Conditions: 150 mM KOAc, 10 mM MgCl2 and 150 mM bicine (pH 8.5), 24 C. The record gives the reactivity of an RNA of 207 nucleotides to 2A3 and DMS. The 2A3 profile rests on 1,880 reads. Source: RMDB library OK3TST, as collected in RNAgym.
[RMDB]
RNA sequence: GGGAACGACUCGAGUAGAGUCGAAAAGGAUUGUCUCUUGUGAUAGUUGGGACUCCAUCAUAAUCCGCACGUGGUUCAGUGCUUGGCCCAUGGUUCUGGAUUCUUCCAGAUUCUGGAGAAACUGUGUAUUCUUGCUGAAACAAGAGGUCCCGAAUCCCUAGGAUCGAGUAUUCGUACUCGAUCCUAGAAAAGAAACAACAACAACAAC
Reactivity to 2A3 in 0.01 (KOAc 150mM, MgCl2 10mM, bicine 150mM(pH8.5), 24C), signal-to-noise 3, nucleotides 027 to 156: g040g000a050u040u100g050u020c020u000c000u020u020g040u010g030a100u120a140g020u040u100g020g020g000a020c050u040c040c030a050u070c020a040u100a090a050u040c010c010g060c020a020c060g060u080g010g120u170u080c060a060g010u050g180c050u110u120g020g010c030c000c030a060u050g080g000u060u020c020u050g010g050a110u210u030c030u180u000c050c000a020g000a160u130u050c040u090g000g010a000g020a010a130a040c090u090g010u030g040u150a080u030u040c020u010u050g030c020u040g030a050a020a110c000a000a000g010a010g020g000u010c010c000c000g010a020a040u040c010c000
Reactivity to DMS in 0.01 (KOAc 150mM, MgCl2 10mM, bicine 150mM(pH8.5), 24C), signal-to-noise 2, nucleotides 027 to 156: g010g000a150u010u000g010u000c010u000c030u000u000g010u020g000a200u000a050g030u000u000g010g020g000a070c030u000c060c030a090u010c070a090u020a060a120u000c030c030g000c120a060c020g000u000g040g020u000u000c030a090g040u000g020c040u000u000g000g000c030c010c020a050u010g010g000u020u000c030u000g020g010a130u000u000c190u010u000c000c000a070g000a090u000u000c060u000g020g010a090g010a230a060a120c080u000g000u000g030u000a080u000u010c020u010u000g030c040u000g000a220a100a030c010a030a050g010a070g020g020u000c020c000c000g020a070a180u000c050c070